[RMDB]
Chemical mapping of a 177-nucleotide RNA with DMS and 2A3.

RNA sequence: GGGAACGACUCGAGUAGAGUCGAAAAGUGUCAUAAUUUAGCCUCUUAUGACGAUUGACUGGAGCCGCAAAAACUGUUCGUGCAGUCUCUGCGGCAUGGAUUAAGCAGGUCCCUGACCUGCUUUUUACGAAAGAGAUGUUUUCGAACAUCUCUUUCGAAAAGAAACAACAACAACAAC
Reactivity to DMS in 0.01 (KOAc 150mM, MgCl2 10mM, bicine 150mM(pH8.5), 24C), signal-to-noise 7, nucleotides 027 to 126: g020u020g010u010c000a010u010a010a020u020u010u010a130g020c060c060u010c300u000u000a000u000g000a020c000g010a150u010u020g000a140c110u010g000g000a120g010c000c000g010c000a010a020a120a110a020c010u000g000u010u030c300g010u040g000c010a010g000u000c010u000c300u000g010c000g010g000c000a010u010g000g010a110u020u010a020a010g000c000a000g000g010u000c010c140c170u040g000a070c010c000u000g000c000u000u000u000u000u000a110
Reactivity to 2A3 in 0.01 (KOAc 150mM, MgCl2 10mM, bicine 150mM(pH8.5), 24C), signal-to-noise 7, nucleotides 027 to 126: g160u090g000u010c000a000u000a030a030u060u070u130a060g040c000c010u040c010u010u010a010u010g010a000c030g120a150u070u120g080a090c070u100g070g120a030g010c020c000g010c020a030a010a010a010a000c040u080g050u290u300c230g160u300g100c000a010g010u020c000u000c020u060g000c000g000g010c000a000u020g020g020a040u060u100a020a000g010c000a000g030g050u030c230c050c140u120g030a010c000c000u000g000c000u000u000u000u000u010a010

Values cover nucleotides 27 to 126. High DMS reactivity at an A or C suggests that its Watson-Crick edge is free.